[RMDB]
RNA sequence: GGGAACGACUCGAGUAGAGUCGAAAAACUAUAUCGCCGGUUAGCGCCAUCGACGACGCUCCCGCCAGCAUAUAGCUGCCGUUUUGCGCAAUGGUGAGCUGACCAGCACCUUCGAUGGUGCCAGCAAAUCAUAAUCGCAUUUCGAUGCGAUUAUGAUAAAAGAAACAACAACAACAAC
Reactivity to DMS in 0.01 (KOAc 150mM, MgCl2 10mM, bicine 150mM(pH8.5), 24C), signal-to-noise 6, nucleotides 027 to 126: a090c080u000a100u000a080u010c100g010c050c100g020g010u000u000a030g030c020g020c030c020a050u000c090g000a120c140g010a120c030g010c010u000c150c110c040g010c210c010a020g010c010a110u010a090u000a100g010c020u010g020c130c030g010u000u010u010u000g000c040g020c060a160a070u010g000g010u000g000a140g020c000u000g000a040c040c090a160g010c010a020c010c000u000u000c250g010a060u000g010g020u000g000c000c240a040g000c050a070a090
Reactivity to 2A3 in 0.01 (KOAc 150mM, MgCl2 10mM, bicine 150mM(pH8.5), 24C), signal-to-noise 5, nucleotides 027 to 126: a000c110u110a110u040a060u300c100g040c050c040g000g010u020u030a000g000c010g010c050c000a030u040c050g140a100c060g050a090c010g040c020u040c010c010c000g030c040c000a000g000c040a030u300a030u110a300g000c010u010g010c010c010g030u000u030u150u160g020c050g000c000a030a040u060g020g010u040g060a030g020c000u000g020a020c010c010a000g000c000a000c000c000u100u180c080g180a260u160g000g010u000g010c010c010a020g030c020a070a130

Structure probing data (DMS and 2A3) for a 177-nucleotide construct. For DMS, 6,169 sequencing reads were counted. Values cover nucleotides 27 to 126. The reactions ran in a buffer of 150 mM KOAc, 10 mM MgCl2 and 150 mM bicine (pH 8.5), at 24 C.